[RMDB]
Chemical mapping of a 177-nucleotide RNA with 2A3. The reactions ran in a buffer of 150 mM KOAc, 10 mM MgCl2 and 150 mM bicine (pH 8.5), at 24 C.

RNA sequence: GGGAACGACUCGAGUAGAGUCGAAAACAAUUGGACUCUGAGCGGAGUUUAAUUUGCAAAGGAACUAUCAUGGCAAGAACAUUGCUAUACUGUCUGAUAGUCAAGCCAUAAAGGCGCUCAGCAAAGCCGCUACUCGGGCUUUCGAGCCCGAGUAGCGAAAAGAAACAACAACAACAAC
Reactivity to 2A3 in 0.01 (KOAc 150mM, MgCl2 10mM, bicine 150mM(pH8.5), 24C), signal-to-noise 1, nucleotides 027 to 126: c000a000a040u000u080g000g000a000c000u000c040u100g000a130g030c000g010g000a060g030u000u000u040a060a100u040u030u070g000c100a210a030a180g220g000a140a020c000u000a000u090c000a060u270g000g020c040a180a120g000a160a070c000a300u050u210g000c010u100a000u250a110c000u000g030u000c000u000g000a000u000a000g000u000c010a130a000g000c000c030a030u200a180a000a000g190g000c000g000c000u040c000a140g000c060a010a010a010g090c060